[RMDB]
RNA sequence: GGGAACGACUCGAGUAGAGUCGAAAACGCCAACCCGGUAUGAUUCAACGAACUCAUUUUCAAUGCCCUCAUAGAGCGUUACAGGCGUGCUAUCGACGGCCUCCGUUCUGUUCAUUAUCGCCACGACGCGAUCGUGAUCUGCCAUCUUGCCGUAGUCGAGCCCGGUCAAGUUCGCUUGACCGGGCUCAAAAGAAACAACAACAACAAC
Reactivity to 2A3 in 0.01 (KOAc 150mM, MgCl2 10mM, bicine 150mM(pH8.5), 24C), signal-to-noise 1, nucleotides 027 to 156: c070g060c070c200a090a090c000c000c020g000g000u100a130u110g080a090u300u030c110a110a070c000g050a060a070c090u050c120a090u000u000u170u190c130a210a000u120g030c000c000c000u060c000a020u050a070g000a000g040c020g120u110u150a000c000a100g060g030c060g000u000g000c000u070a170u200c040g060a060c000g030g030c000c000u220c200c000g000u070u020c020u000g000u050u000c000a000u020u020a000u000c000g040c040c030a280c290g040a080c080g040c010g000a000u000c000g000u000g000a000u010c000u070g030c000c010a140u000c000u000u120g000c000c000g130u080a040g010u090c030
The record gives the reactivity of an RNA of 207 nucleotides to 2A3. The 2A3 profile rests on 325 reads.